An RNA of 177 nucleotides, treated with DMS and 2A3 and read out base by base. Source: RMDB library OK1LIB, as collected in RNAgym. DMS adducts were read by reverse transcription with MarathonRT. For 2A3 the reverse transcriptase was SuperScript II with manganese.
[RMDB]
RNA sequence: GGGAACGACUCGAGUAGAGUCGAAAAGGGAGAACCGAGCAGAGGCAUAGCGAACUGCGCACGGCGAAGCCUUGAGGGAAGGCCGUAGGACCCGGGUUCGAUUCCCGGCGGCUCCACCGAAGGGCCAGAUAUAGCUCCUGUUCGCAGGAGCUAUAUCAAAAGAAACAACAACAACAAC
Reactivity to DMS in 0.01 (KOAc 150mM, MgCl2 10mM, bicine 150mM(pH8.5), 24C), signal-to-noise 6, nucleotides 027 to 126: g020g000g010a120g010a100a100c050c030g010a140g020c040a040g010a110g000g000c030a090u010a130g030c060g010a080a100c040u010g010c010g010c080a130c050g000g000c060g000a130a210g020c010c000u000u000g000a300g010g000g000a170a200g000g000c000c010g010u020a060g010g000a140c230c010c000g000g000g010u010u020c140g000a300u030u030c000c000c010g000g020c040g000g000c010u010c030c060a300c030c030g000a210a070g010g010g010c010c110a050
Reactivity to 2A3 in 0.01 (KOAc 150mM, MgCl2 10mM, bicine 150mM(pH8.5), 24C), signal-to-noise 9, nucleotides 027 to 126: g050g030g000a120g020a060a020c030c030g000a020g000c030a010g020a060g090g010c070a100u150a080g080c040g060a090a040c010u040g000c020g010c050a060c060g040g010c050g040a040a000g010c000c010u020u020g020a040g000g010g020a050a050g020g000c000c010g030u090a090g060g210a100c010c010c020g010g000g000u040u070c040g010a040u070u070c000c000c000g000g000c000g000g000c010u030c040c080a040c000c000g010a030a020g010g000g000c000c000a000